[RMDB]
Structure probing data (DMS and 2A3) for a 177-nucleotide construct. Source: RMDB library OK2TRN, as collected in RNAgym. 2A3 adducts were read by reverse transcription with SuperScript II with manganese. The reactions ran in a buffer of 150 mM KOAc, 10 mM MgCl2 and 150 mM bicine (pH 8.5), at 24 C.

RNA sequence: GGGAACGACUCGAGUAGAGUCGAAAACUGGUGUCGGACGCGGUAAAGAAGUUUGUGAUGAACCCGGAGUACAUGCGCGCGGCGUGGAUGCGCGAGGUGGAGAACAACAUGCUGUUCGGCAUGACCACUUUAGCCCUAUUUUCGAAUAGGGCUAAAGAAAAGAAACAACAACAACAAC
Reactivity to DMS in 0.01 (KOAc 150mM, MgCl2 10mM, bicine 150mM(pH8.5), 24C), signal-to-noise 6, nucleotides 027 to 126: c060u010g010g020u000g010u010c030g010g010a050c050g020c040g010g020u010a070a120a130g000a090a120g010u000u000u000g020u010g000a140u010g010a080a070c060c020c020g000g010a200g010u000a060c070a050u010g010c050g010c070g020c070g010g010c070g020u010g010g000a100u000g010c020g000c050g010a050g010g010u000g010g010a130g000a110a060c100a060a110c050a050u000g000c000u010g030u000u010c090g010g000c000a030u000g010a160c070c060a150
Reactivity to 2A3 in 0.01 (KOAc 150mM, MgCl2 10mM, bicine 150mM(pH8.5), 24C), signal-to-noise 3, nucleotides 027 to 126: c020u040g040g000u000g010u030c010g000g000a020c020g000c040g020g080u140a070a110a080g070a100a050g040u100u150u100g070u050g050a150u070g030a010a030c010c020c010g020g020a060g020u070a020c020a060u090g030c020g000c010g010c030g090g030c010g040u080g050g070a090u120g020c060g010c040g030a090g000g010u060g010g030a090g030a040a010c010a040a000c010a040u120g020c040u110g040u060u030c000g000g000c000a000u030g010a050c040c010a050